The record gives the reactivity of an RNA of 207 nucleotides to 2A3.
The RNA was probed in 150 mM KOAc, 10 mM MgCl2 and 150 mM bicine (pH 8.5) at 24 C.
[RMDB]
RNA sequence: GGGAACGACUCGAGUAGAGUCGAAAAGACGCGUUCGCGCGUCACUGACCUUUGUGUGUAGGACCGUAUUGUCAGAGCGGACGAUCCCAUUGGGAUCGUCUCGCUCUUGGAUUUAUACGUGUCCUACACACUCUGGUGCCUGGAGGCUUCGGCCUCCUCUUGGACAUGUGUUCGCACAUGUCCAAGAAAAAGAAACAACAACAACAAC
Reactivity to 2A3 in 0.01 (KOAc 150mM, MgCl2 10mM, bicine 150mM(pH8.5), 24C), signal-to-noise 2, nucleotides 027 to 156: g060a010c010g040c000g000u050u220c300g000c000g000c000g080u030c010a010c070u080g100a000c000c000u000u010u000g050u000g000u000g000u000a010g010g000a000c000c000g000u000a010u000u020g030u010c000a000g030a000g000c000g000g020a010c000g000a000u000c020c070c160a300u300u300g000g000g000a000u000c000g020u000c020u000c010g000c000u000c000u000u050g000g000a010u000u280u240a030u010a030c010g050u080g000u040c000c000u000a000c000a020c000a000c000u000c000u020g000g000u010g050c010c010u010g000g000a000g000g000c010u060u100c300g080g000c000c050u010c040c000